This 177-nucleotide RNA was probed chemically with DMS and 2A3. Source: RMDB library OK2TST, as collected in RNAgym. The DMS profile rests on 5,704 reads. For DMS the reverse transcriptase was MarathonRT. The reactions ran in a buffer of 150 mM KOAc, 10 mM MgCl2 and 150 mM bicine (pH 8.5), at 24 C.
RNA sequence: GGGAACGACUCGAGUAGAGUCGAAAAUCCGCUUGGUAUCGGCCAUGCCAUGGAAUUCGGAGAUUGGGUUGGCUACGGGCGAAAUGGCAAGCCGGAAUUCUGGAUCGGAGCACAGAAAGGCGCGAAAGAUGCAUGAGUAUUUCGAUACUCAUGCAUCAAAAGAAACAACAACAACAAC
Reactivity to DMS in 0.01 (KOAc 150mM, MgCl2 10mM, bicine 150mM(pH8.5), 24C), signal-to-noise 5, nucleotides 027 to 126: u010c010c010g020c090u020u010g010g010u010a070u010c040g010g010c010c070a170u010g000c000c020a020u000g000g010a190a130u000u010c030g000g000a050g010a060u000u000g020g020g040u000u000g010g010c020u000a070c020g020g000g000c050g000a180a110a050u000g010g020c010a070a270g010c000c000g000g010a070a080u000u000c050u000g000g000a080u010c060g010g010a050g040c070a080c070a060g010a040a080a090g000g010c050g020c070g010a060a090a090
Reactivity to 2A3 in 0.01 (KOAc 150mM, MgCl2 10mM, bicine 150mM(pH8.5), 24C), signal-to-noise 4, nucleotides 027 to 126: u010c010c010g000c060u040u080g090g010u060a070u130c020g020g000c030c030a160u090g020c000c000a020u040g000g050a030a050u060u040c030g010g010a050g020a060u050u200g120g030g040u070u070g060g000c000u010a030c020g000g000g040c040g030a020a010a030u010g020g000c010a010a010g010c010c000g000g040a030a050u110u040c010u040g020g000a040u070c040g040g010a030g000c040a010c010a080g080a100a100a020g050g000c040g000c030g040a060a070a020